[RMDB]
RNA sequence: GGGAACGACUCGAGUAGAGUCGAAAACAAACAGACAAGAGAAGUCAAUUAAAGGUAUCAUUGAAAAAGAAGUAAAACUAUCUGUUUGCAGAGGAAAUGAGAAACCUUAAAGAAUCAGUGAUUCUCUAACUCAAACAAUAAGAGAAUUCAGUAAUAAGAUGGGUAUAAUAUUCGUAUUAUACCCAUCAAAAGAAACAACAACAACAAC
Reactivity to DMS in 0.01 (KOAc 150mM, MgCl2 10mM, bicine 150mM(pH8.5), 24C), signal-to-noise 2, nucleotides 027 to 156: c030a010a090a060c050a020g020a040c040a010a010g010a050g070a050a060g000u010c040a020a000u000u000a030a030a030g020g000u000a050u000c100a160u010u000g000a080a180a070a100a140g020a080a110g020u020a060a070a080a190c070u000a080u000c040u000g000u000u010u000g000c020a090g010a140g030g000a110a090a130u030g000a100g020a170a090a120c050c020u000u020a040a100a160g010a100a070u000c070a070g000u020g030a120u000u000c010u000c000u010a090a090c120u010c020a080a100a120c140a020a090u000a100a060g000a040g000a030a050u000u000c080a130g010u020a030a090u000a070a220
Reactivity to 2A3 in 0.01 (KOAc 150mM, MgCl2 10mM, bicine 150mM(pH8.5), 24C), signal-to-noise 2, nucleotides 027 to 156: c000a000a050a000c000a000g040a000c000a010a090g010a010g000a020a000g010u010c000a000a000u000u020a010a010a000g020g020u040a060u080c090a080u010u210g100a070a030a050a030a010g070a050a010g040u090a040a150a040a060c030u040a090u130c020u020g030u080u090u060g020c040a000g000a020g080g020a050a110a050u070g010a030g030a100a020a020c000c000u040u030a140a080a000g050a020a050u200c010a020g150u240g090a060u010u020c000u020c010u020a030a010c030u030c090a070a090a010c020a040a020u160a140a000g050a000g050a020a040u130u130c020a010g160u270a020a130u300a110a000
Background: The record gives the reactivity of an RNA of 207 nucleotides to DMS and 2A3. DMS (dimethyl sulfate) methylates the pairing face of unpaired adenines and cytosines. The DMS profile rests on 2,175 reads. It was measured as part of the RMDB library OK3TST. As a SHAPE reagent, 2A3 marks flexible, mostly unpaired nucleotides at the ribose 2'-OH. 2A3 adducts were read by reverse transcription with SuperScript II with manganese.